Chemical mapping of a 177-nucleotide RNA with DMS. It was measured as part of the RMDB library TTRINS. The DMS profile rests on 1,496 reads. The reactions ran in a buffer of 150 mM KOAc, 10 mM MgCl2 and 150 mM bicine (pH 8.5), at 24 C.
[RMDB]
RNA sequence: GGGAACGACUCGAGUAGAGUCGAAAAGAUAUGGAGAAUCACCUAGGCAGAGCACGGAACUACAGCUAAGUAUCGGAAACGAUACGAAAGCUGCCGUGCGACGAAGCCUAGGUGAUUCUCCUAAGUCGCUUCCAAUACUGUUCGCAGUAUUGGAAGCAAAAGAAACAACAACAACAAC
Reactivity to DMS in 0.01 (KOAc 150mM, MgCl2 10mM, bicine 150mM(pH8.5), 24C), signal-to-noise 2, nucleotides 027 to 126: g010a110u000a240u020g000g010a030g020a010a010u000c000a010c000c000u000a010g030g080c000a100g000a290g030c000a000c000g010g010a250a010c110u010a300c020a020g010c030u010a050a300g000u000a030u010c010g010g000a090a080a240c000g010a030u000a000c010g000a020a060a060g000c020u000g000c000c000g020u000g000c000g020a060c240g000a100a070g000c000c030u000a000g010g030u000g000a000u000u000c000u000c000c000u000a000a070g020u000c070